The record gives the reactivity of an RNA of 177 nucleotides to DMS and 2A3.
For 2A3 the reverse transcriptase was SuperScript II with manganese.
For DMS the reverse transcriptase was MarathonRT.
The 2A3 profile rests on 1,997 reads.

[RMDB]
RNA sequence: GGGAACGACUCGAGUAGAGUCGAAAAGCACUCACAGCCUUUGUGACCAUCGCCCUUCAUCAUGGGCUGGCCGUCUUCCAGGAUGAGGGUGCAGAGCCAUUGAAGCAGAGAGUGGUAAGUUCAGUGGAACGAAUCGGCUAUUCGUAGCCGAUUCGUUAAAAGAAACAACAACAACAAC
Reactivity to DMS in 0.01 (KOAc 150mM, MgCl2 10mM, bicine 150mM(pH8.5), 24C), signal-to-noise 3, nucleotides 027 to 126: g010c020a060c010u000c030a140c070a030g030c050c030u000u000u010g020u000g010a010c040c030a110u000c130g010c000c000c010u010u000c080a050u010c100a030u000g000g000g010c090u000g000g010c050c020g000u010c070u010u010c080c070a030g010g010a040u000g000a050g000g010g030u010g000c020a100g000a130g010c020c000a040u000u000g000a080a060g030c050a120g010a090g000a080g020u000g000g000u020a060a150g000u010u000c020a070g000u000g010g010
Reactivity to 2A3 in 0.01 (KOAc 150mM, MgCl2 10mM, bicine 150mM(pH8.5), 24C), signal-to-noise 1, nucleotides 027 to 126: g050c000a000c010u050c000a020c060a060g000c000c000u020u070u090g050u070g020a080c000c010a070u080c080g010c000c020c000u060u140c060a170u030c020a060u100g020g000g020c000u020g000g020c020c000g040u040c010u060u000c010c020a000g000g010a020u000g000a020g000g040g010u080g010c030a030g040a000g070c000c000a010u060u090g040a050a010g020c040a020g020a000g020a000g180u040g010g080u080a120a030g000u060u020c030a030g100u090g090g050